Chemical mapping of a 177-nucleotide RNA with 2A3 and DMS. Source: RMDB library TTRDEL, as collected in RNAgym. The reactions ran in a buffer of 150 mM KOAc, 10 mM MgCl2 and 150 mM bicine (pH 8.5), at 24 C. The 2A3 profile rests on 58,961 reads. 2A3 adducts were read by reverse transcription with SuperScript II with manganese.

[RMDB]
RNA sequence: GGGAACGACUCGAGUAGAGUCGAAAAGAUAUGGACCCACAAGCACACUGAUAUACCUCGGAAACGAGGUAUGUUUGGUGUGAACUACUGUGGGUCCUAAGUCAAAACUUGGUGUUCGCACCAAGAAGGAUAUAAACUAGUUCGCUAGUUUAUAUCCAAAAGAAACAACAACAACAAC
Reactivity to 2A3 in 0.01 (KOAc 150mM, MgCl2 10mM, bicine 150mM(pH8.5), 24C), signal-to-noise 9, nucleotides 027 to 126: g030a010u070a030u130g000g000a000c010c010c000a000c010a010a020g020c000a000c000a000c010u000g020a000u000a000u000a010c000c000u010c000g010g030a050a080a030c010g020a010g000g000u000a000u010g010u010u070u260g020g000u000g000u000g010a020a050c040u300a050c070u040g000u010g010g010g000u000c000c000u000a000a010g020u000c010a000a010a060a100c000u000u000g000g010u030g050u090u100c300g020c120a000c000c010a000a000g010a010a060
Reactivity to DMS in 0.01 (KOAc 150mM, MgCl2 10mM, bicine 150mM(pH8.5), 24C), signal-to-noise 9, nucleotides 027 to 126: g010a040u000a300u010g000g000a010c000c000c000a000c000a050a080g010c000a010c000a010c010u000g000a000u000a010u000a000c000c000u000c000g010g000a110a100a250c000g010a010g000g010u000a000u000g000u000u000u010g040g000u000g010u000g000a070a100c100u010a120c190u000g010u000g000g010g010u000c000c000u000a000a060g000u000c030a100a080a090a160c010u000u010g010g020u000g000u010u010c230g020c000a010c000c000a010a000g010a100a120